[RMDB]
RNA sequence: GGGAACGACUCGAGUAGAGUCGAAAAGAUAUGGAUUCCACAAGGUCCGAUAAGUUACAGUCGGAAACGACUGAAUAACUUUUGACGGACCUGUGGAAUCCUAAGUCAAACCGGAGUUCGCUCCGGAGGUACGUUCUUAGUUCGCUAAGAACGUACCAAAAGAAACAACAACAACAAC
Reactivity to DMS in 0.01 (KOAc 150mM, MgCl2 10mM, bicine 150mM(pH8.5), 24C), signal-to-noise 3, nucleotides 027 to 126: g020a060u000a300u000g010g000a020u000u000c000c000a020c000a070a080g010g000u000c000c000g020a170u000a020a010g000u000u000a050c000a020g010u000c000g010g000a150a080a260c020g000a020c000u000g020a200a130u000a030a010c000u000u000u010u000g020a270c120g000g000a010c000c000u000g000u000g000g020a000a000u000c000c000u000a000a040g020u000c020a040a080a250c010c000g000g000a010g020u000u010c300g020c010u000c000c000g010g010a010
Reactivity to 2A3 in 0.01 (KOAc 150mM, MgCl2 10mM, bicine 150mM(pH8.5), 24C), signal-to-noise 3, nucleotides 027 to 126: g010a000u060a030u130g000g000a000u010u010c030c010a000c040a120a240g020g000u030c010c070g060a080u030a170a000g010u000u000a020c000a000g000u010c000g040g000a070a060a040c000g000a000c000u010g010a100a140u040a020a010c000u020u050u110u230g260a140c100g000g000a000c000c010u010g000u000g000g010a000a000u010c000c000u000a020a000g010u000c050a020a050a120c010c000g000g010a000g000u120u300c270g040c130u000c010c000g030g010a030
Chemical mapping of a 177-nucleotide RNA with DMS and 2A3.
For DMS the reverse transcriptase was MarathonRT.
2A3 adducts were read by reverse transcription with SuperScript II with manganese.
Conditions: 150 mM KOAc, 10 mM MgCl2 and 150 mM bicine (pH 8.5), 24 C.
For DMS, 3,248 sequencing reads were counted.